[RMDB]
RNA sequence: GGGAACGACUCGAGUAGAGUCGAAAAGGUCUUAAGCAGGAGUAUUUUGCCAGAGUUGAAGCAGCAUUUGCCACACAGGGUGCAUCAACCAGGCACUCUUACAUAAGAGGGACAUCCAGAGAUAGCACCCUGUUUGGCUCUUCUUUGGUGCAGGCGGAAUGGUGAACAUGUUCGCAUGUUCACCAUUAAAAGAAACAACAACAACAAC
Reactivity to 2A3 in 0.01 (KOAc 150mM, MgCl2 10mM, bicine 150mM(pH8.5), 24C), signal-to-noise 2, nucleotides 027 to 156: g040g010u010c030u120u100a090a030g040c050a020g000g040a010g000u170a140u080u100u070u080g020c020c020a020g010a060g040u050u080g060a090a010g060c040a000g040c070a110u060u030u200g010c010c010a020c010a010c000a010g010g000g000u000g030c000a000u000c000a020a070c040c060a030g010g040c060a020c000u000c010u000u070a180c060a150u300a100a000g010a010g010g030g020a030c060a080u040c040c030a020g010a000g010a040u050a020g000c000a000c000c000c000u030g000u010u000u020g000g000c010u020c010u020u000c000u010u040u080g020g000u030g030c030a020g040g000c050g030g040
Reactivity to DMS in 0.01 (KOAc 150mM, MgCl2 10mM, bicine 150mM(pH8.5), 24C), signal-to-noise 1, nucleotides 027 to 156: g000g010u000c020u000u000a080a080g010c080a070g000g020a070g030u000a060u010u020u000u000g100c000c020a090g000a090g020u050u000g000a060a080g000c080a060g010c100a190u010u000u000g020c000c000a020c030a070c030a110g000g010g010u000g040c000a110u000c050a070a180c040c010a300g070g050c170a070c000u000c000u000u000a110c160a070u000a040a100g000a020g010g000g020a180c070a070u010c010c010a100g000a130g010a090u000a160g030c080a000c000c010c010u000g020u000u000u000g000g000c000u000c040u000u000c050u010u000u000g040g040u000g000c100a070g010g020c040g010g000